An RNA of 177 nucleotides, treated with DMS and read out base by base.
It was measured as part of the RMDB library TTRINS.
RNA sequence: GGGAACGACUCGAGUAGAGUCGAAAAGAUAUGGAGCAAAUCCACCGACUCCUUGUAGGGAGAACGUGGUCGGAAACGACCACCGGUUCAUCGAUCUAUGGGAGUCGGUGGAUUUGCUCCUAAGUCAGUUAAAAGUUAAGUUCGCUUAACUUUUAACAAAAGAAACAACAACAACAAC
Reactivity to DMS in 0.01 (KOAc 150mM, MgCl2 10mM, bicine 150mM(pH8.5), 24C), signal-to-noise 3, nucleotides 027 to 126: g010a070u000a300u010g000g010a020g010c010a010a010a020u000c010c010a000c000c000g010a030c000u000c000c000u000u010g080u010a010g000g010g010a190g000a010a020c030g020u000g000g010u000c000g010g000a130a090a290c020g000a020c000c010a000c110c300g050g010u010u000c060a260u010c160g000a160u020c010u000a020u010g000g000g000a000g030u000c000g000g000u000g010g010a000u000u000u000g010c000u000c000c000u010a010a060g010u000c040a180
For DMS, 4,160 sequencing reads were counted.